[RMDB]
RNA sequence: GGGAACGACUCGAGUAGAGUCGAAAAUUGCCUGCAGCGGCGAUGUGCAGCGCUACCAGGUCCUUGACGAGAUCACCCUGCUGGUCGACAAGUCACUGGUGAUGGCCGACGACAACAGCGGCCGGACCACCAAUUCGCGUUUCGACGCGAAUUGGUGAAAAGAAACAACAACAACAAC
Reactivity to DMS in 0.01 (KOAc 150mM, MgCl2 10mM, bicine 150mM(pH8.5), 24C), signal-to-noise 2, nucleotides 027 to 126: u000u050g000c010c000u000g050c140a050g020c050g000g000c000g010a030u090g000u080g030c070a130g000c190g040c040u030a000c110c100a060g010g000u060c080c020u040u050g010a140c010g000a150g000a030u000c040a150c090c010c030u000g160c030u000g000g010u010c000g000a150c110a110a060g000u040c060a030c070u000g000g050u000g000a070u000g000g000c000c000g010a090c080g000a180c300a060a050c160a070g020c010g000g010c030c000g010g000a160c140
Reactivity to 2A3 in 0.01 (KOAc 150mM, MgCl2 10mM, bicine 150mM(pH8.5), 24C), signal-to-noise 3, nucleotides 027 to 126: u110u090g060c000c000u000g070c050a010g030c000g170g040c060g020a110u130g130u130g040c000a030g020c030g010c070u040a070c000c030a010g020g050u050c020c000u100u060g050a150c120g050a000g030a170u010c000a020c020c040c060u110g020c070u060g050g010u000c030g000a110c010a080a080g000u050c010a010c170u000g000g060u050g010a070u120g020g000c000c000g010a110c090g040a070c100a130a050c030a220g010c000g000g000c000c000g020g000a060c000

Annotation: Source: RMDB library OK1LIB, as collected in RNAgym. An RNA of 177 nucleotides, treated with DMS and 2A3 and read out base by base. The 2A3 profile rests on 1,508 reads. The reactions ran in a buffer of 150 mM KOAc, 10 mM MgCl2 and 150 mM bicine (pH 8.5), at 24 C.